This 207-nucleotide RNA was probed chemically with 2A3 and DMS. 2A3 adducts were read by reverse transcription with SuperScript II with manganese.

RNA sequence: GGGAACGACUCGAGUAGAGUCGAAAAUCCUAAGUCCAAUUAAGACAGCGUAACGAAACUUCGAUGAAACGUCGGAAACGACGUGGAGAAGUAGUUACGCAAUGACGAUUGGAUAUGGAAAAAGCCUUUAACCACGUUUCGACGUGGUUAAAGGCAACAUUAAAGCGUUGUUCGCAACGCUUUAAUGAAAAGAAACAACAACAACAAC
Reactivity to 2A3 in 0.01 (KOAc 150mM, MgCl2 10mM, bicine 150mM(pH8.5), 24C), signal-to-noise 7, nucleotides 027 to 156: u020c000c000u030a120a010g020u000c000c000a010a000u040u050a140a060g070a110c040a130g300c040g000u010a000a010c020g050a300a070a050c030u020u010c050g300a300u100g030a040a020a000c000g000u000c000g030g000a070a060a050c020g000a000c000g000u010g000g000a010g000a000a000g010u030a020g000u000u000a000c010g010c010a000a010u000g000a010c060g000a000u000u010g000g010a010u020a110u210g050g070a070a060a020a060a020g000c000c000u000u000u000a000a000c000c000a000c010g000u020u070u160c300g120a030c000g000u010g000g000u000u000a000a000a000g000g000c000a000a000
Reactivity to DMS in 0.01 (KOAc 150mM, MgCl2 10mM, bicine 150mM(pH8.5), 24C), signal-to-noise 3, nucleotides 027 to 156: u000c000c010u010a110a250g010u010c010c010a040a020u020u010a080a240g030a230c050a140g030c000g020u000a000a020c020g010a260a240a170c020u000u000c010g010a220u020g030a170a180a010c010g000u000c000g020g000a170a090a250c020g020a010c010g020u000g010g000a060g010a010a030g010u000a070g000u000u000a010c010g020c010a020a010u020g000a210c170g000a020u000u000g010g040a030u000a250u000g020g010a040a080a080a120a140g020c000c000u000u010u000a000a000c000c000a000c020g000u000u010u010c280g020a110c010g040u010g010g000u010u000a000a000a000g020g060c000a000a000
Background
The data come from the RNA Mapping Database (RMDB), library RNAMAK. Conditions: 150 mM KOAc, 10 mM MgCl2 and 150 mM bicine (pH 8.5), 24 C. For DMS the reverse transcriptase was MarathonRT. For DMS, 6,688 sequencing reads were counted.